[RMDB]
RNA sequence: GGGAACGACUCGAGUAGAGUCGAAAAGAUGUUCCGCCUCCCCGGAGUCCCGAGUGAGGCUUAUCCCGGGGAAUCCGGCCAAGUCCCGAAAUGUCUAGUCCCGUGGUCUCACUUCCAAAAGGAGGAGUUAGUGUUCACUUCGGUGAACACAAAAGAAACAACAACAACAAC
Reactivity to DMS in 0.01 (KOAc 150mM, MgCl2 10mM, bicine 150mM(pH8.5), 24C), signal-to-noise 5, nucleotides 027 to 129: g020a130u040g020u060u010c040c050g030c180c050u000c020c000c040c000g020g010a140g000u010c090c020c000g040a050g000u050g040a040g010g030c080u020u060a090u020c030c020c000g000g010g000g000a000a000u040c100c090g000g000c090c070a090a120g040u030c020c020c010g020a050a110a070u040g000u040c050u030a090g000u020c010c010c030g010u040g040g000u030c030u000c000a100c080u010u010c050c050a070a060a100a120g000g000a090g050g000a100g000u030u030a100
Reactivity to 2A3 in 0.01 (KOAc 150mM, MgCl2 10mM, bicine 150mM(pH8.5), 24C), signal-to-noise 4, nucleotides 027 to 129: g030a040u140g020u130u020c020c010g020c030c000u030c000c010c000c000g010g000a050g050u060c000c020c010g020a010g040u090g020a040g020g000c000u060u090a090u120c020c000c000g000g000g000g010a030a060u050c020c000g010g010c030c030a080a020g040u060c000c000c000g000a060a050a020u140g030u020c030u020a020g070u040c000c000c000g020u050g010g000u010c010u040c020a080c000u030u010c020c010a030a060a060a090g030g000a060g020g030a000g050u090u130a060